[RMDB]
RNA sequence: GGGAACGACUCGAGUAGAGUCGAAAAGAUAUGGAGGAGUCAACAUCGAACGGAUGCUUCGGAAACGAAGUUUCCGUGACGAAGUGUUGAGCUCCUCCUAAGUCAAACGUUUUAGUUCGCUAAAACGGAUUCGUUAUAUCUUCGGAUAUAACGAAUCAAAAGAAACAACAACAACAAC
Reactivity to 2A3 in 0.01 (KOAc 150mM, MgCl2 10mM, bicine 150mM(pH8.5), 24C), signal-to-noise 6, nucleotides 027 to 126: g020a020u070a060u220g000g000a000g000g000a010g020u030c000a010a000c000a020u090c030g020a020a010c000g000g000a010u030g010c000u000u000c000g020g030a060a090a050c000g000a010a000g000u000u020u000c010c000g000u000g070a070c020g050a170a080g210u060g000u100u010g010a050g010c000u000c000c000u000c000c000u000a000a000g000u010c010a040a050a060c020g000u010u000u000u010a040g010u030u070c300g000c170u020a010a000a000a020c020g040
Reactivity to DMS in 0.01 (KOAc 150mM, MgCl2 10mM, bicine 150mM(pH8.5), 24C), signal-to-noise 9, nucleotides 027 to 126: g000a050u000a300u000g000g010a020g010g010a010g020u000c000a010a010c010a060u000c020g010a300a010c000g000g000a010u000g000c000u010u000c000g020g000a120a120a200c000g010a010a010g020u000u000u000c000c000g010u000g000a130c080g010a090a100g010u000g020u000u000g000a070g010c000u000c000c000u000c000c000u000a010a090g000u000c040a130a110a300c010g000u000u000u000u000a010g000u000u020c280g020c010u000a000a000a010a000c010g010
The record gives the reactivity of an RNA of 177 nucleotides to 2A3 and DMS.
The data come from the RNA Mapping Database (RMDB), library TTRDES.
For DMS the reverse transcriptase was MarathonRT.
High DMS reactivity at an A or C suggests that its Watson-Crick edge is free.